[RMDB]
RNA sequence: GGGAACGACUCGAGUAGAGUCGAAAACGGGAUGAAGACUACUCCCCAGACCGAGGCAAGUCUCGAGAUGACGACAAUUCCUUUAGCAGACCAAAGUAGACAACCGAGUUCGCUCGGUUGUCUACAAUCCAAAAUAUCACUUCGGUGAUAUUUUGGAAAAAGAAACAACAACAACAAC
Reactivity to DMS in 0.01 (KOAc 150mM, MgCl2 10mM, bicine 150mM(pH8.5), 24C), signal-to-noise 1, nucleotides 027 to 126: c180g000g020g000a090u000g000a070a090g020a050c050u000a110c190u010c030c010c000c130a070g000a130c060c010g000a040g010g020c130a140a170g000u010c010u010c060g000a130g000a060u000g010a070c050g000a070c050a120a090u000u010c010c010u030u000u000a070g010c090a110g000a050c120c060a070a060a080g020u000a000g010a020c010a000a000c000c000g000a030g030u000u030c210g030c020u000c000g000g000u000u000g000u000c000u000a010c010a060a110
This 177-nucleotide RNA was probed chemically with DMS. Conditions: 150 mM KOAc, 10 mM MgCl2 and 150 mM bicine (pH 8.5), 24 C. For DMS the reverse transcriptase was MarathonRT.